[RMDB]
RNA sequence: GGGAACGACUCGAGUAGAGUCGAAAAUCUUGGCGGCUAAAUGAUGAAGAUCCCACCACUCAUCGUUUGUUAAAUGGGAAUAGUAGAGGCAGCGCAUCUUGUUUAUAAUACUAUAUGGAACAUGGAAUCGGUAUAGGAUCUUCGGAUCCUAUACCGAAAAAGAAACAACAACAACAAC
Reactivity to 2A3 in 0.01 (KOAc 150mM, MgCl2 10mM, bicine 150mM(pH8.5), 24C), signal-to-noise 1, nucleotides 027 to 126: u000c000u000u050g000g040c000g000g000c000u000a040a030a040u160g010a040u000g030a000a000g000a070u040c000c000c000a010c010c000a080c000u030c000a070u010c090g090u160u070u000g120u110u090a100a060a030u100g000g050g010a090a060u000a030g000u050a090g000a000g020g050c000a040g000c000g000c060a080u020c020u030u040g080u030u020u020a060u030a110a000u010a030c050u020a000u030a070u300g070g010a120a030c030a090u080g040g080a090a170
Reactivity to DMS in 0.01 (KOAc 150mM, MgCl2 10mM, bicine 150mM(pH8.5), 24C), signal-to-noise 2, nucleotides 027 to 126: u000c020u020u000g000g040c090g020g000c080u030a030a040a050u010g000a020u010g010a020a110g000a100u030c010c010c010a060c150c050a190c040u010c030a000u010c020g050u030u000u010g010u050u010a040a070a050u020g010g000g000a040a030u010a060g020u000a070g000a120g010g000c060a040g000c060g030c100a080u010c040u020u000g000u000u020u000a060u000a100a120u010a060c060u020a040u030a050u000g000g000a050a090c020a040u020g040g000a070a130